The data come from the RNA Mapping Database (RMDB), library OK2TST. The record gives the reactivity of an RNA of 177 nucleotides to DMS and 2A3. The reactions ran in a buffer of 150 mM KOAc, 10 mM MgCl2 and 150 mM bicine (pH 8.5), at 24 C.
[RMDB]
RNA sequence: GGGAACGACUCGAGUAGAGUCGAAAAUUGAGGUGGAAGACUAUGGAUUUGGCAUGUUCACGACCAACAUAUGGAUGAAAUUCCGAGAAGGAAGUUCAGAAGUGUGUGACCACAGGUUAAUGUCAGCUCUAGUGUCGCGUUUCGACGCGACACUAGAAAAAGAAACAACAACAACAAC
Reactivity to DMS in 0.01 (KOAc 150mM, MgCl2 10mM, bicine 150mM(pH8.5), 24C), signal-to-noise 2, nucleotides 027 to 126: u010u000g040a090g000g000u010g010g000a080a070g010a030c060u000a060u000g010g000a030u000u000u000g010g000c030a040u000g000u000u010c080a130c120g000a120c080c020a090a040c020a030u000a020u000g010g000a300u020g010a020a040a020u000u000c000c000g020a120g030a110a210g000g000a000a020g010u000u000c000a020g010a300a150g010u000g010u010g000u000g010a050c050c100a030c130a090g000g000u000u010a070a040u000g020u010c040a090g000c150
Reactivity to 2A3 in 0.01 (KOAc 150mM, MgCl2 10mM, bicine 150mM(pH8.5), 24C), signal-to-noise 1, nucleotides 027 to 126: u050u040g030a060g040g040u030g000g030a110a000g020a040c010u020a040u180g030g000a050u040u020u110g000g000c000a000u050g020u080u080c060a040c160g060a010c010c010a020a060c000a030u040a000u000g070g000a000u000g010a000a100a000u060u000c010c010g020a070g030a100a000g000g000a020a000g010u030u030c000a020g000a100a060g040u070g000u020g000u000g040a050c020c010a040c090a120g190g040u010u100a050a040u060g020u060c040a010g090c000
For DMS the reverse transcriptase was MarathonRT.
For DMS, 1,028 sequencing reads were counted.
For 2A3 the reverse transcriptase was SuperScript II with manganese.